[RMDB]
RNA sequence: GGGAACGACUCGAGUAGAGUCGAAAAGAGAGGACCAGGCGCAGCAUAUAUUGUGUUUGCGCUGAGACCGAGGAUCGAAGUGUCAUCGUCUCAGGGGCGCGGCGACCGUGGCGCUGGAUCCUUGUAGGGCGCAUGGCUCGUUCGCGAGCCGUGCGCCAAAAGAAACAACAACAACAAC
Reactivity to 2A3 in 0.01 (KOAc 150mM, MgCl2 10mM, bicine 150mM(pH8.5), 24C), signal-to-noise 2, nucleotides 027 to 126: g160a020g050a050g090g000a080c050c000a070g030g000c020g000c000a000g130c050a070u130a000u050a100u240u300g070u040g100u030u190u120g000c080g000c000u010g020a000g010a030c000c020g070a040g020g020a040u020c080g110a220a060g010u060g000u130c020a000u070c000g060u000c020u110c010a040g000g000g100g000c040g010c040g000g000c000g000a030c020c000g000u010g040g020c000g000c020u060g000g050a070u000c030c000u000u050g100u080a090g000